The record gives the reactivity of an RNA of 207 nucleotides to DMS and 2A3. The RNA was probed in 150 mM KOAc, 10 mM MgCl2 and 150 mM bicine (pH 8.5) at 24 C.
[RMDB]
RNA sequence: GGGAACGACUCGAGUAGAGUCGAAAAUGCAAGUAGUGCUAUUGUUGGAAUCACCGUACCUAUUUCGGUUUACGCUCCAAGAUCGGUGGAUAGCAGCCCUAUCAAUAUCUAGGAGAACUGUGCUAUGAAAACGGUAUUGGCUUCGGCCAAUACCGAAUCACAUAAAUAGGUUCGCCUAUUUAUGUGAAAAAGAAACAACAACAACAAC
Reactivity to DMS in 0.01 (KOAc 150mM, MgCl2 10mM, bicine 150mM(pH8.5), 24C), signal-to-noise 3, nucleotides 027 to 156: u010g030c030a090a160g020u000a080g030u000g020c010u000a050u000u010g020u000u000g010g010a110a120u010c030a030c030c010g030u000a090c050c020u000a120u000u000u000c050g040g000u000u000u000a080c070g010c050u010c030c020a060a060g010a050u000c070g020g020u000g010g000a080u000a060g010c030a180g000c080c060c020u000a130u000c030a100a120u000a080u000c110u010a130g010g010a090g010a040a080c040u000g010u000g020c030u000a070u020g000a070a060a070a180c030g020g020u000a020u000u000g010g010c030u000u010c300g060g010c000c000a000a010u000a010c000c000g010a010a020
Reactivity to 2A3 in 0.01 (KOAc 150mM, MgCl2 10mM, bicine 150mM(pH8.5), 24C), signal-to-noise 3, nucleotides 027 to 156: u130g020c050a070a040g070u080a010g040u100g040c020u040a060u070u080g070u050u050g030g040a070a080u090c010a020c030c010g030u060a050c010c020u100a140u160u120u190c030g010g000u030u040u080a040c050g020c030u000c010c010a020a000g010a060u040c050g030g050u060g060g020a020u040a030g020c040a020g000c020c010c010u020a030u050c030a050a070u030a020u200c030u020a020g000g020a060g020a020a010c030u060g020u030g100c030u060a060u220g100a060a060a050a040c000g000g000u000a000u000u000g000g010c000u000u050c160g070g010c000c000a000a000u010a000c010c000g000a000a000

For 2A3, 4,064 sequencing reads were counted.